The data come from the RNA Mapping Database (RMDB), library OK2TRN.
Chemical mapping of a 177-nucleotide RNA with DMS and 2A3.

[RMDB]
RNA sequence: GGGAACGACUCGAGUAGAGUCGAAAAGAGGAUUCAACGAGCUUCGUAGCAACGAUAGCAACGUAGCUUUUGCUACGACCCGAGCUAUCGAGGGCAGCUACGUCCCAUGCUCGAGGGUAGAAUCCGAAGUGAUCCGAUGAUUCGUCAUCGGAUCACUAAAAGAAACAACAACAACAAC
Reactivity to DMS in 0.01 (KOAc 150mM, MgCl2 10mM, bicine 150mM(pH8.5), 24C), signal-to-noise 3, nucleotides 027 to 126: g020a220g010g000a000u000u000c020a160a200c040g000a010g000c000u000u000c010g020u000a000g020c000a170a140c050g010a010u000a010g000c020a090a170c020g010u000a000g000c010u000u010u010u000g010c020u010a010c030g010a110c220c150c140g010a150g010c000u000a000u000c010g020a110g000g010g010c270a110g010c020u010a010c000g000u030c120c060c110a060u030g000c000u000c000g000a090g010g010g020u010a110g010a030a020u000c000c040g010a080
Reactivity to 2A3 in 0.01 (KOAc 150mM, MgCl2 10mM, bicine 150mM(pH8.5), 24C), signal-to-noise 2, nucleotides 027 to 126: g170a020g000g010a020u020u000c040a090a020c030g020a020g010c030u130u060c020g000u000a000g000c010a040a060c020g010a020u000a010g000c010a020a080c000g010u010a010g000c000u070u170u200u300g000c010u000a000c010g050a030c000c010c040g010a030g050c030u020a010u000c010g000a100g020g140g060c110a060g000c030u020a020c000g040u030c040c030c000a060u140g000c000u030c010g040a090g060g090g060u090a100g020a000a020u000c020c000g010a040
Record summary:
2A3 adducts were read by reverse transcription with SuperScript II with manganese. Reactivities are given for positions 27 through 126. For 2A3, 2,395 sequencing reads were counted.